[RMDB]
RNA sequence: GGGAACGACUCGAGUAGAGUCGAAAAUGACGUUAAACUGCUGACUCUUACAUACUGACACCGGUUGCUCAACAGGCUGUGUGGGACAAUAGAAUAACAAGGCUGUCAAUUUGAGCUUGACGGCUGCAAAACCUGCAGUACUUCGGUACUGCAGGAAUCCAGUUAGUGAGUUCGCUCACUAACUGGAAAAAGAAACAACAACAACAAC
Reactivity to 2A3 in 0.01 (KOAc 150mM, MgCl2 10mM, bicine 150mM(pH8.5), 24C), signal-to-noise 2, nucleotides 027 to 156: u110g040a030c080g030u040u090a050a130a030c040u060g020c020u030g040a070c040u000c000u000u070a020c000a080u120a080c000u080g070a050c020a060c100c020g120g020u060u070g000c020u050c070a020a030c000a080g020g040c070u040g000u020g020u030g040g000g020a020c010a030a050u040a130g060a060a020u100a110a000c060a150a000g020g000c000u000g020u040c020a000a010u070u050u130g060a020g030c010u000u000g000a000c000g030g000c000u020g000c020a070a080a030a130c000c000u000g000c000a000g000u000a000c000u050u020c110g060g000u000a000c000u000g020c000a000g000g000a000a000
Reactivity to DMS in 0.01 (KOAc 150mM, MgCl2 10mM, bicine 150mM(pH8.5), 24C), signal-to-noise 1, nucleotides 027 to 156: u010g050a160c120g000u000u020a010a090a110c050u000g000c060u020g000a140c090u000c050u000u060a050c050a090u010a130c020u000g060a120c060a140c050c030g040g040u020u000g000c050u000c010a070a040c050a080g030g010c020u000g030u000g040u000g020g000g000a000c050a060a150u000a060g040a090a140u000a040a120c070a050a260g020g020c020u010g000u000c010a020a060u000u000u020g020a150g000c300u000u000g000a080c010g000g000c000u010g000c050a120a090a070a160c020c000u000g000c000a000g020u000a010c020u010u010c290g010g070u000a000c000u000g020c000a010g000g000a020a000
Chemical mapping of a 207-nucleotide RNA with 2A3 and DMS. The 2A3 profile rests on 1,295 reads. DMS adducts were read by reverse transcription with MarathonRT. The reactions ran in a buffer of 150 mM KOAc, 10 mM MgCl2 and 150 mM bicine (pH 8.5), at 24 C. Source: RMDB library M2RFPK, as collected in RNAgym.